[RMDB]
RNA sequence: GGGAACGACUCGAGUAGAGUCGAAAACCACCGCAAUUCGUUGCGGUGGGAAGGUGCAAUUCGCUGUCUGCACCACAGACGGCCAAUCCGUCAAAGCGAAAACUGGAGGGUCAUUCGUGACCCUCAACGCAAGACUAUCAUUCGUGAUAGUCUUGCGAAAAGAAACAACAACAACAAC
Reactivity to DMS in 0.01 (KOAc 150mM, MgCl2 10mM, bicine 150mM(pH8.5), 24C), signal-to-noise 3, nucleotides 027 to 126: c000c000a010c000c010g020c000a010a020u000u000c140g060u000u000g020c000g000g010u000g010g010g000a030a010g020g030u010g030c020a030a160u010u000c020g030c030u000g020u000c060u000g010c000a040c050c030a050c060a210g000a010c030g030g010c220c300a120a120u010c000c000g000u000c020a050a300a060g000c000g000a010a060a110a070c200u020g010g000a010g010g000g000u000c000a070u000u010c230g010u000g010a010c010c000c000u000c000a010a070
Reactivity to 2A3 in 0.01 (KOAc 150mM, MgCl2 10mM, bicine 150mM(pH8.5), 24C), signal-to-noise 2, nucleotides 027 to 126: c000c010a010c000c000g000c010a010a030u090u050c200g050u130u020g000c000g000g000u000g010g010g000a030a100g000g010u020g030c040a110a200u080u040c000g000c030u020g040u090c030u040g010c010a000c000c000a010c020a010g000a000c000g000g000c060c060a050a060u110c000c000g020u000c010a040a010a010g020c010g000a020a000a020a120c140u130g140g000a000g000g000g010u000c010a000u050u090c130g090u010g000a010c020c030c000u000c010a000a000
Overview
The record gives the reactivity of an RNA of 177 nucleotides to DMS and 2A3. The RNA was probed in 150 mM KOAc, 10 mM MgCl2 and 150 mM bicine (pH 8.5) at 24 C. DMS adducts were read by reverse transcription with MarathonRT. Values cover nucleotides 27 to 126.